[RMDB]
Structure probing data (2A3 and DMS) for a 177-nucleotide construct. In probing experiments dimethyl sulfate is read out at A N1 and C N3, which are open when not base-paired. The DMS profile rests on 5,472 reads. DMS adducts were read by reverse transcription with MarathonRT. The reactions ran in a buffer of 150 mM KOAc, 10 mM MgCl2 and 150 mM bicine (pH 8.5), at 24 C.
RNA sequence: GGGAACGACUCGAGUAGAGUCGAAAAACCCAGCUCUUAAGAUGGUUCAAACACAUCUUAGCCACUAUGUUCUUAACAUAGAUUGGUUGUGGUUUGCAUUUGAGACUGGUUUGGCAUACAUGCUCUAGUUCUAGUAUGUCUUCGGACAUACUAGAACAAAAGAAACAACAACAACAAC
Reactivity to 2A3 in 0.01 (KOAc 150mM, MgCl2 10mM, bicine 150mM(pH8.5), 24C), signal-to-noise 5, nucleotides 027 to 126: a000c000c000c000a010g020c080u020c010u030u040a070a020g050a080u040g090g030u170u130c020a020a010a020c060a010c000a120u070c050u110u100a000g000c000c000a010c000u000a000u000g020u050u040c170u210u240a040a000c000a010u020a040g070a170u030u100g020g000u030u090g020u040g040g080u020u020u020g020c020a030u010u010u060g020a020g010a030c010u010g000g060u070u080u060g070g010c030a050u090a160c030a080u180g030c010u010c020u070a030
Reactivity to DMS in 0.01 (KOAc 150mM, MgCl2 10mM, bicine 150mM(pH8.5), 24C), signal-to-noise 5, nucleotides 027 to 126: a080c130c010c020a040g000c180u010c030u000u000a050a020g000a030u000g020g020u010u020c060a020a040a030c040a060c030a080u010c210u010u000a050g000c010c010a050c000u000a010u000g000u000u000c300u010u010a050a030c010a010u000a000g000a130u010u010g010g020u000u010g010u010g010g000u000u000u000g000c040a040u000u000u000g000a030g000a050c030u000g010g000u000u010u000g010g010c080a090u010a100c180a100u010g010c010u000c130u010a190